[RMDB]
RNA sequence: GGGAACGACUCGAGUAGAGUCGAAAAGCGUACUACAAUAGGAGAUACGUUGAAACAGUCCUACCCACCUCGUCCCAAAUAGGACGAGAGGGACUGUGGAGUAUCUUUAUUGUAUCGCAAAGAACGCUUCAGUUUGUUCGCAAACUGAAGCGUUCAAGUUGUUACAUAUGUUCGCAUAUGUAACAACAAAAGAAACAACAACAACAAC
Reactivity to DMS in 0.01 (KOAc 150mM, MgCl2 10mM, bicine 150mM(pH8.5), 24C), signal-to-noise 2, nucleotides 027 to 156: g000c010g020u000a040c070u000a050c000a010a040u000a060g000g020a040g010a050u000a000c000g000u010u000g020a300a150a060c010a010g030u000c010c010u000a060c070c000c050a300c110c020u000c000g010u000c010c010c000a030a150a210u000a040g000g000a020c010g020a020g000a110g010g020g000a000c000u000g000u000g000g010a210g030u010a000u000c010u000u000u000a010u010u000g000u000a010u010c030g040c040a060a050a170g010a000a010c010g000c010u010u000c000a030g000u000u000u000g020u000u020c300g030c010a030a030a000c000u040g000a020a000g010c000g000u000u000c000a000a110
Reactivity to 2A3 in 0.01 (KOAc 150mM, MgCl2 10mM, bicine 150mM(pH8.5), 24C), signal-to-noise 5, nucleotides 027 to 156: g010c000g040u100a130c050u010a010c030a010a010u020a050g180g010a030g010a010u010a000c030g090u230u050g000a020a020a000c000a000g000u010c010c010u030a140c030c020c010a040c000c000u000c000g000u000c000c000c030a180a300a100u300a080g010g000a000c000g000a000g000a000g000g000g000a000c000u000g000u000g010g000a020g000u000a000u000c000u010u030u010a010u000u000g010u000a020u300c000g000c010a080a060a010g000a010a000c000g000c000u000u000c000a000g000u000u020u010g100u070u120c230g000c160a000a000a000c000u000g000a000a000g000c000g000u000u000c000a000a000